[RMDB]
RNA sequence: GGGAACGACUCGAGUAGAGUCGAAAACGACCGCCUGACGGGUCGGACAUAGCGUCAGGAUCAUCCGUGUCAGUCACCACGGUAAUCAUGUGCCUGAUGAUGGUUUUCCAUCUUAAUCUGACUGGGUCGUAGCAGUCUACAGUACUAUGACAUUAGACGCGUAAUAAUGCUUCGGCAUUAUUACGCGAAAAGAAACAACAACAACAAC
Reactivity to 2A3 in 0.01 (KOAc 150mM, MgCl2 10mM, bicine 150mM(pH8.5), 24C), signal-to-noise 1, nucleotides 027 to 156: c030g020a000c020c030g020c000c030u040g000a020c010g010g020g040u070c030g080g000a050c060a050u180a050g060c000g030u000c020a000g050g000a010u100c010a050u040c010c020g000u060g020u030c000a000g010u030c000a030c010c000a010c010g010g020u050a030a020u060c080a040u020g020u020g040c000c000u030g000a040u100g020a020u010g010g050u070u040u080u150c020c000a010u000c030u070u060a250a080u010c090u120g010a000c030u010g000g060g000u040c010g000u000a000g000c000a000g010u010c160u190a100c070a100g000u000a040c000u000a010u000g000a000c000a040u090u120a120g070a040